[RMDB]
Chemical mapping of a 177-nucleotide RNA with 2A3 and DMS. DMS adducts were read by reverse transcription with MarathonRT. The reactions ran in a buffer of 150 mM KOAc, 10 mM MgCl2 and 150 mM bicine (pH 8.5), at 24 C. For 2A3 the reverse transcriptase was SuperScript II with manganese.
RNA sequence: GGGAACGACUCGAGUAGAGUCGAAAAGGCAGGAGUAGAAUGGGCCCAAUCUAGGGUCUCACUGCAGGCCAGAUGCUACUUUUGUUUGGCGCACGGCCUGGUGAUUGAUCCGGCUGUGUUCUCCGCGCAAUAUUUUAAUUUUCGAAUUAAAAUAUUGAAAAGAAACAACAACAACAAC
Reactivity to 2A3 in 0.01 (KOAc 150mM, MgCl2 10mM, bicine 150mM(pH8.5), 24C), signal-to-noise 4, nucleotides 027 to 126: g030g000c010a000g000g010a010g000u060a030g030a140a060u080g010g000g000c000c000c000a010a050u050c030u090a050g010g000g000u000c000u010c000a030c010u070g010c010a010g000g040c020c000a020g010a020u030g000c010u000a030c000u060u050u040u100g090u010u090u100g030g000c010g000c010a000c010g000g000c010c000u020g000g010u020g020a180u030u150g030a000u000c000c000g000g000c000u010g000u000g000u030u010c020u000c000c010g000c010g000
Reactivity to DMS in 0.01 (KOAc 150mM, MgCl2 10mM, bicine 150mM(pH8.5), 24C), signal-to-noise 9, nucleotides 027 to 126: g010g000c000a040g010g010a020g010u020a060g010a080a090u030g000g000g010c000c000c010a050a060u030c190u030a130g010g000g010u000c000u010c020a020c020u010g020c030a050g020g010c030c010a070g010a160u030g010c010u010a020c050u010u020u020u030g010u020u020u010g000g010c090g020c060a140c090g000g010c000c000u010g010g000u000g000a110u020u040g010a080u000c000c020g000g010c020u010g000u010g000u000u000c020u010c010c060g010c190g000